[RMDB]
RNA sequence: GGGAACGACUCGAGUAGAGUCGAAAAAUUGCCUGUGGCGGUGUUGGCUGGACGACCGAGUGUCGGCGGAUACCUCCGGGCAGCUUGUCUGCUUGCAUGCUCCCAUGGGCUGGCUCCUGCUUGCAGUAGUAUUCUAUAACUUCGGUUAUAGAAUACUAAAAGAAACAACAACAACAAC
Reactivity to 2A3 in 0.01 (KOAc 150mM, MgCl2 10mM, bicine 150mM(pH8.5), 24C), signal-to-noise 5, nucleotides 027 to 126: a000u080u040g010c020c000u100g060u200g070g010c100g000g000u010g020u050u050g180g000c030u090g120g050a040c020g040a050c050c120g100a140g040u230g030u020c010g010g010c010g030g000a020u040a050c000c010u010c010c000g000g020g000c000a000g010c010u080u080g030u080c010u020g010c000u010u040g020c020a040u070g020c020u030c030c050c000a040u090g030g000g040c040u030g050g000c020u040c020c010u030g020c020u040u050g020c010a030g010u040
Reactivity to DMS in 0.01 (KOAc 150mM, MgCl2 10mM, bicine 150mM(pH8.5), 24C), signal-to-noise 4, nucleotides 027 to 126: a070u010u000g000c000c010u000g020u010g020g010c140g020g020u000g020u000u000g000g040c010u010g000g020a100c030g010a120c120c110g010a140g020u010g010u010c010g010g010c020g010g000a050u000a030c030c010u000c020c010g000g000g010c020a020g010c100u000u010g010u000c020u000g000c020u000u000g010c050a050u010g010c070u000c040c020c020a130u010g000g000g000c070u000g000g010c060u000c040c030u000g000c030u000u000g010c050a070g010u000